Source information:
The record gives the reactivity of an RNA of 177 nucleotides to DMS and 2A3. The reactions ran in a buffer of 150 mM KOAc, 10 mM MgCl2 and 150 mM bicine (pH 8.5), at 24 C. For 2A3, 1,280 sequencing reads were counted. The DMS profile rests on 1,269 reads. It was measured as part of the RMDB library M2PK50.

RNA sequence: GGGAACGACUCGAGUAGAGUCGAAAAGUUUACAUCUUCGGAUGUAAACAAAAAAAUUCAGCGGUUUAAAUUUCGAGGCGAUAACCGCUGAUCGCCUCGAAAAAACCUCUGCGUUCGCGCAGAGGAAGCAAUUAGAAUAGUUCGCUAUUCUAAUUGCAAAAGAAACAACAACAACAAC
Reactivity to DMS in 0.01 (KOAc 150mM, MgCl2 10mM, bicine 150mM(pH8.5), 24C), signal-to-noise 1, nucleotides 027 to 126: g010u000u000u000a010c000a000u000c000u000u010c120g020g020a030u000g000u000a000a010a000c010a010a010a060a110a060a050a160u000u010c050a030g000c040g010g000u000u020u000a050a180a160u000u000u000c010g010a010g000g000c010g020a020u010a080a050c060c050g000c050u010g030a010u010c020g020c010c020u000c000g000a010a000a010a040a080a070c010c000u000c000u000g000c000g010u010u010c260g000c000g000c000a010g010a000g000g000a040a060
Reactivity to 2A3 in 0.01 (KOAc 150mM, MgCl2 10mM, bicine 150mM(pH8.5), 24C), signal-to-noise 2, nucleotides 027 to 126: g010u000u000u000a000c010a020u010c000u050u050c220g090g010a000u000g000u000a010a010a000c020a020a090a020a020a000a000a000u130u020c030a040g020c010g080g210u130u300u300a090a280a080u170u300u080c030g000a010g000g020c010g000a010u020a060a050c070c000g010c040u000g000a000u010c000g000c000c010u020c000g030a000a000a000a000a000a010c010c000u000c000u000g000c000g010u030u050c300g000c000g000c100a000g000a010g000g000a000a010